[RMDB]
Description: Structure probing data (2A3) for a 177-nucleotide construct.

RNA sequence: GGGAACGACUCGAGUAGAGUCGAAAAGAAAGAAAGAAAGUCAGGCAAAGGGAUAUUUACAGAUACUUUUUAAAAUUUGUUUGAGUUGAGGCAGAUUAAAUAUCUGUAUUCUCCUUUGCCUGCAGAAUAACGACGUUGUUUUCGAACAACGUCGUUAAAAAGAAACAACAACAACAAC
Reactivity to 2A3 in 0.01 (KOAc 150mM, MgCl2 10mM, bicine 150mM(pH8.5), 24C), signal-to-noise 2, nucleotides 027 to 126: g250a000a020a000g180a090a000a000g120a090a110a010g110u140c000a000g010g000c000a000a030a010g110g010g000a060u150a070u300u120u000a060c000a000g000a000u000a020c020u150u170u150u250u210a000a230a040a110u030u000u020g080u080u070u140g170a070g030u180u110g170a040g000g000c000a000g000a000u020u020a080a000a000u010a000u000c000u010g000u050a000u000u000c050u090c000c000u040u000u000g000c000c000u000g000c000a000g000a000a080

Source information: The reactions ran in a buffer of 150 mM KOAc, 10 mM MgCl2 and 150 mM bicine (pH 8.5), at 24 C.